[RMDB]
RNA sequence: GGGAACGACUCGAGUAGAGUCGAAAAGCGGAGGAAAAGAAAGAGAAAUCGAUUCCGUAAGUAGUGGCGAGCGAAAGCGGAUGGAGCCCAAACCGAAGGUAUUCCUUCGGGGUUGUAGGACCACGUCCAGGCAGUAAGAGUUCGCUCUUACUGCCUGAAAAGAAACAACAACAACAAC
Reactivity to DMS in 0.01 (KOAc 150mM, MgCl2 10mM, bicine 150mM(pH8.5), 24C), signal-to-noise 4, nucleotides 027 to 126: g010c040g030g020a070g020g000a050a060a060a110g000a040a060a070g000a110g020a030a100a050u000c060g000a120u020u010c000c000g030u000a050a090g010u010a050g020u010g010g030c170g000a250g010c020g000a080a120a230g000c040g010g010a050u000g000g000a080g040c030c030c020a050a060a150c020c010g010a010a000g020g020u040a120u030u030c000c000u010u000c020g010g010g010g000u020u010g010u000a070g000g000a050c050c050a040c120g010u040c100
Reactivity to 2A3 in 0.01 (KOAc 150mM, MgCl2 10mM, bicine 150mM(pH8.5), 24C), signal-to-noise 3, nucleotides 027 to 126: g000c030g060g030a080g010g120a070a040a040a080g200a060a080a020g110a010g000a010a040a030u180c050g050a070u070u000c000c000g010u020a010a000g000u010a000g000u020g050g160c160g020a020g000c020g010a070a050a020g010c030g000g000a000u030g020g030a020g020c020c020c010a050a070a020c000c000g010a020a000g030g000u120a150u290u270c010c000u000u000c000g000g000g000g000u010u060g040u030a040g000g020a010c010c000a020c030g040u020c010